[RMDB]
RNA sequence: GGGAACGACUCGAGUAGAGUCGAAAAGCUUCUCACCUGUAGCGACGCAUAAAGCAGUUGGCAGGUUAAUCACAUUACACAUAACUGUGUAUAAGGAAGAGCGGGUAUUUUAUACCUGCUCUUCCUUUAAAUUUGUGGACUUCGGUCCACAAAUUUAAAAAGAAACAACAACAACAAC
Reactivity to DMS in 0.01 (KOAc 150mM, MgCl2 10mM, bicine 150mM(pH8.5), 24C), signal-to-noise 2, nucleotides 027 to 126: g030c180u000u040c010u010c030a020c020c020u000g000u000a020g070c050g000a010c080g000c020a180u010a140a090a230g010c020a160g030u000u000g000g050c000a090g000g000u000u060a090a100u080c200a050c170a040u070u000a030c030a020c000a110u040a100a120c260u000g030u000g000u020a010u020a090a010g000g030a020a020g020a020g000c000g000g000g010u010a000u000u040u000u080a050u010a050c000c000u040g000c000u000c000u000u020c000c000u000u000